[RMDB]
RNA sequence: GGGAACGACUCGAGUAGAGUCGAAAAUAUACAUCAGAAGUCGGCACAACUCCCGACUCGCGGUGAGCGAUGCAGCGUAGCGCUAGCUACGCAGCUGCUGUGCGGAUGGCUAGCAAAAGCUAGCCUAGACUACGAUCCGUUUCGACGGAUCGUAGUCAAAAGAAACAACAACAACAAC
Reactivity to 2A3 in 0.01 (KOAc 150mM, MgCl2 10mM, bicine 150mM(pH8.5), 24C), signal-to-noise 3, nucleotides 027 to 126: u200a010u020a080c090a080u180c010a000g060a100a000g060u010c000g000g120c140a020c060a300a270c130u020c010c000c000g010a000c010u020c010g010c040g000g060u100g010a030g010c030g170a240u130g010c020a030g000c000g000u030a000g000c000g000c140u100a000g020c010u010a000c000g000c010a000g000c000u030g000c000u030g030u100g030c000g030g130a040u140g030g000c000u030a040g000c000a100a000a000a300g000c000u000a010g000c020c000u020a030
Reactivity to DMS in 0.01 (KOAc 150mM, MgCl2 10mM, bicine 150mM(pH8.5), 24C), signal-to-noise 2, nucleotides 027 to 126: u060a070u070a160c050a020u000c050a080g000a080a020g000u000c010g020g000c230a120c120a140a150c300u010c060c020c000g010a090c080u020c030g000c300g040g050u020g000a060g000c100g020a060u040g010c000a040g000c000g010u000a010g020c010g020c210u060a050g030c030u030a030c030g000c020a040g000c000u000g010c000u020g030u040g030c070g000g060a100u000g000g000c000u000a000g010c000a130a130a100a130g000c000u000a000g020c000c000u000a020